[RMDB]
RNA sequence: GGGAACGACUCGAGUAGAGUCGAAAAGUCGCCCAGCUGGAGUGCAAUGGGGCAAUCUCAGCUCACUGCAACCUCUGCGUCCCGGGUUCAAAGGAUCCUCCUGCCUCAGCCUCCUGAGUAGCUGGAACUACAGGCAUGUGCCACCACACCUGGCUAAGGCAUAAUUUAUAUUCGUAUAAAUUAUGCCAAAAGAAACAACAACAACAAC
Reactivity to 2A3 in 0.01 (KOAc 150mM, MgCl2 10mM, bicine 150mM(pH8.5), 24C), signal-to-noise 2, nucleotides 027 to 156: g100u060c040g020c020c010c000a000g010c020u060g000g020a010g000u120g050c050a100a180u080g020g000g030g000c010a040a050u070c090u030c070a060g050c000u040c030a070c070u080g020c020a000a050c000c030u040c020u040g010c010g030u060c020c010c020g010g050g000u080u080c080a160a070a080g080g010a060u090c000c050u030c010c050u080g000c000c010u050c000a070g060c020c010u060c000c020u020g040a070g050u020a010g020c010u030g010g040a060a040c030u100a080c020a030g030g020c010a030u110g040u050g020c010c010a030c030c010a010c010a000c010c000u000g000g060c020u070a070a060
Reactivity to DMS in 0.01 (KOAc 150mM, MgCl2 10mM, bicine 150mM(pH8.5), 24C), signal-to-noise 1, nucleotides 027 to 156: g030u000c080g040c030c020c030a160g000c040u020g000g000a030g010u010g000c050a040a090u010g030g010g090g030c020a080a070u010c070u000c050a100g030c010u010c030a120c030u000g030c010a050a040c020c020u010c000u010g030c060g000u000c010c030c010g000g040g030u000u000c020a060a110a160g010g000a090u000c030c010u010c030c040u010g000c030c010u010c020a110g030c020c000u000c020c040u000g000a100g000u000a090g010c020u000g000g000a050a040c010u000a050c000a050g010g010c030a070u010g000u020g000c050c060a080c040c020a040c050a040c030c020u010g020g020c060u000a130a170

The record gives the reactivity of an RNA of 207 nucleotides to 2A3 and DMS. For 2A3 the reverse transcriptase was SuperScript II with manganese. DMS adducts were read by reverse transcription with MarathonRT.